[RMDB]
RNA sequence: GGGAACGACUCGAGUAGAGUCGAAAAGAUAUGGACGAGGGAGUACGCCGCGUACUCUUGGAUUUAUAUGAUCGGAAACGAUCAUAUUGUCAGAGUACGAACUACGGUAAAACCUCGUCCUAAGUCAAACUAACAAAUAGUUCGCUAUUUGUUAGAAGUUGAUACUACAGUUCGCUGUAGUAUCAACAAAAGAAACAACAACAACAAC
Reactivity to 2A3 in 0.01 (KOAc 150mM, MgCl2 10mM, bicine 150mM(pH8.5), 24C), signal-to-noise 6, nucleotides 027 to 156: g020a010u020a010u050g000g000a000c010g000a010g010g040g010a040g190u050a060c110g010c000c000g110c000g010u000a000c000u000c000u020u190g060g000a010u040u300u050a000u010a000u000g000a000u000c000g000g030a020a010a020c000g010a000u000c010a000u010a000u000u010g010u010c050a030g000a000g010u010a000c010g020a060a020c040u180a080c080g000g020u050a010a010a010a040c000c000u000c000g000u000c000c000u000a000a000g000u000c010a020a030a080c000u000a000a000c000a000a000a000u000a000g030u040u060c240g010c170u000a000u000u000u010g000u000u000a000g000a040a010
Reactivity to DMS in 0.01 (KOAc 150mM, MgCl2 10mM, bicine 150mM(pH8.5), 24C), signal-to-noise 2, nucleotides 027 to 156: g000a150u020a160u000g000g000a000c010g020a030g020g040g010a100g030u000a080c220g000c000c070g020c040g000u000a010c000u000c020u010u000g050g020a070u000u000u000a010u010a010u000g010a020u000c000g050g010a240a110a200c000g000a000u000c000a000u000a000u000u000g020u000c010a070g010a050g000u010a010c020g020a140a270c010u000a050c000g000g020u000a000a090a130a170c000c000u000c010g010u000c000c000u000a000a090g010u010c030a100a100a250c000u000a000a010c010a010a010a010u000a000g020u000u000c300g020c020u010a000u000u010u000g000u000u000a000g010a020a130

The record gives the reactivity of an RNA of 207 nucleotides to 2A3 and DMS. For DMS, 3,918 sequencing reads were counted. For DMS the reverse transcriptase was MarathonRT. Values are in units of 0.01, from 0 to 300, in steps of 10.